The data come from the RNA Mapping Database (RMDB), library TTRDEL.
This 177-nucleotide RNA was probed chemically with DMS and 2A3.
The reactions ran in a buffer of 150 mM KOAc, 10 mM MgCl2 and 150 mM bicine (pH 8.5), at 24 C.
For DMS, 1,633 sequencing reads were counted.
DMS adducts were read by reverse transcription with MarathonRT.
2A3 adducts were read by reverse transcription with SuperScript II with manganese.
[RMDB]
RNA sequence: GGGAACGACUCGAGUAGAGUCGAAAAGAUAUGGAAAUUGCUAGGGAGUCACUCGGAAACGAGAUGACGAGGAUCUAGUGAUUUCCUAAGUCAGGGGCUAAACUACAGUUCGCUGUAGUUUAGCCAAGAGAAGAUGUGUGUUCGCACACAUCUUCUCAAAAGAAACAACAACAACAAC
Reactivity to DMS in 0.01 (KOAc 150mM, MgCl2 10mM, bicine 150mM(pH8.5), 24C), signal-to-noise 2, nucleotides 027 to 126: g000a070u000a300u000g010g000a000a010a030u000u000g000c030u010a010g000g010g000a030g010u000c000a030c000u000c010g020g010a190a090a190c030g010a010g000a130u000g020a020c030g000a050g000g000a030u020c000u000a010g030u000g010a000u000u000u000c000c000u000a020a080g000u000c030a120g020g000g000g000c000u000a010a000a000c000u000a000c000a000g020u000u000c230g030c000u020g000u000a010g000u020u000u000a010g010c000c010a010a000
Reactivity to 2A3 in 0.01 (KOAc 150mM, MgCl2 10mM, bicine 150mM(pH8.5), 24C), signal-to-noise 1, nucleotides 027 to 126: g030a030u070a030u120g000g010a030a020a000u010u020g000c000u010a010g040g020g030a020g040u000c000a000c040u020c020g000g070a020a060a050c010g010a030g120a280u040g010a020c010g040a080g000g000a000u000c000u000a000g020u010g000a000u000u000u010c000c010u000a070a000g040u000c060a040g060g150g040g000c000u000a000a030a010c000u000a000c010a020g030u030u090c190g140c140u030g000u000a000g010u050u010u000a010g000c010c000a000a000